Overview:
Chemical mapping of a 177-nucleotide RNA with 2A3 and DMS.

RNA sequence: GGGAACGACUCGAGUAGAGUCGAAAAUAUCGGCCAUUCCGCUGCUGUUCAUGGGCAGCCUGAUCGCCGAGUCCUUCUUCGGCAUUCCCGGCCUGGGCAGCUACACCAUCGACGCCAUCAACGCGCAACGACUAUCCCUAUUCGUAGGGAUAGUCGUAAAAGAAACAACAACAACAAC
Reactivity to 2A3 in 0.01 (KOAc 150mM, MgCl2 10mM, bicine 150mM(pH8.5), 24C), signal-to-noise 1, nucleotides 027 to 126: u080a000u030c020g020g020c000c000a040u040u060c050c030g000c030u040g010c000u090g100u190u190c110a170u210g130g010g050c000a000g030c000c030u050g000a010u060c010g000c020c000g020a000g000u030c010c000u010u110c040u040u070c040g000g000c010a050u030u050c030c000c000g080g000c040c020u010g040g000g000c000a010g000c000u030a020c050a050c070c000a020u080c050g070a060c010g030c000c000a100u130c030a060a060c020g010c000g010c030a040
Reactivity to DMS in 0.01 (KOAc 150mM, MgCl2 10mM, bicine 150mM(pH8.5), 24C), signal-to-noise 3, nucleotides 027 to 126: u010a060u010c020g020g010c010c100a070u000u010c060c300g010c020u010g010c020u000g000u000u000c270a130u010g020g010g020c000a040g000c030c080u030g010a040u000c300g000c010c020g000a030g020u000c080c060u000u000c070u000u000c050g020g010c070a150u000u000c030c020c000g010g010c040c050u000g040g020g000c030a070g020c040u000a060c090a100c010c030a040u000c070g010a090c070g010c000c030a020u010c070a030a080c090g010c110g020c080a110
For DMS, 2,128 sequencing reads were counted.
It was measured as part of the RMDB library OK2TST.
For 2A3 the reverse transcriptase was SuperScript II with manganese.
For 2A3, 1,903 sequencing reads were counted.